[RMDB]
RNA sequence: GGGAACGACUCGAGUAGAGUCGAAAACGGGGAUCUCCGCGCAAACCGGGUUCCCAUAUCAGAACUGUCAUUCACUACAGAACUCAGCAGACAAAUUUCUGCAUACAAAAGCACGCAGAUGCCCCACUAAAGGGGUCUAAUUCGUUAGACCCCUUUAAAAAGAAACAACAACAACAAC
Reactivity to DMS in 0.01 (KOAc 150mM, MgCl2 10mM, bicine 150mM(pH8.5), 24C), signal-to-noise 4, nucleotides 027 to 126: c120g020g000g010g000a100u000c020u010c120c010g000c080g000c120a050a090a130c230c070g000g000g000u000u000c000c020c000a120u040a060u010c180a060g000a090a100c050u000g010u010c090a090u030u020c080a070c130u030a050c080a060g000a090a090c090u010c110a050g010c010a040g000a120c270a050a120a130u020u040u000c010u000g030c020a070u020a060c130a040a050a080a090g010c040a030c030g000c130a030g020a040u000g000c060c020c000c040a110c200
Reactivity to 2A3 in 0.01 (KOAc 150mM, MgCl2 10mM, bicine 150mM(pH8.5), 24C), signal-to-noise 2, nucleotides 027 to 126: c090g000g030g000g030a020u020c090u020c100c010g000c010g000c050a150a100a080c010c010g040g000g000u000u020c020c000c000a000u040a020u070c040a020g040a090a090c020u020g040u040c010a060u050u180c050a050c100u150a040c010a030g030a100a040c000u070c150a030g000c060a030g000a110c130a040a150a060u070u100u050c060u030g020c010a040u070a060c050a030a080a010a030g040c010a040c140g000c030a000g000a100u110g030c000c000c000c000a090c040